[RMDB]
RNA sequence: GGGAACGACUCGAGUAGAGUCGAAAAACUAUUUGUUCUAUAGCAAACAAACCCGAAACACAGGAUAUAUUUGUUAUAUAUGCUUUGUGGAACACAGCUGUUAGGACAUGAGCCAUCAGGGUCCAAACAGCGAUCAUGCUUUCGAGCAUGAUCGCUGAAAAGAAACAACAACAACAAC
Reactivity to 2A3 in 0.01 (KOAc 150mM, MgCl2 10mM, bicine 150mM(pH8.5), 24C), signal-to-noise 2, nucleotides 027 to 126: a010c110u080a120u060u080u070g000u060u020c080u020a030u010a030g020c020a110a090a000c020a050a120a020c000c000c000g020a020a090a000c030a000c010a010g160g000a050u000a000u010a000u070u170u270g280u160u030a000u000a000u010a000u040g160c030u050u160u160g000u010g040g000a060a030c130a040c000a100g000c000u010g030u050u000a000g010g000a000c000a000u040g000a000g000c010c000a010u100c040a090g110g000g040u130c000c030a020a070a000
Reactivity to DMS in 0.01 (KOAc 150mM, MgCl2 10mM, bicine 150mM(pH8.5), 24C), signal-to-noise 1, nucleotides 027 to 126: a090c150u020a180u020u020u020g000u000u010c150u020a110u000a090g000c050a070a070a140c040a170a060a150c000c000c000g000a170a020a170c030a010c010a010g000g000a020u000a050u010a000u000u000u050g010u000u000a040u000a000u030a000u000g000c030u020u000u050g030u000g000g020a050a040c170a120c150a110g000c050u000g020u000u000a120g000g020a020c050a000u020g000a130g090c140c120a020u020c010a020g000g000g050u000c000c020a020a010a070
An RNA of 177 nucleotides, treated with 2A3 and DMS and read out base by base. The DMS profile rests on 1,208 reads. 2A3 adducts were read by reverse transcription with SuperScript II with manganese.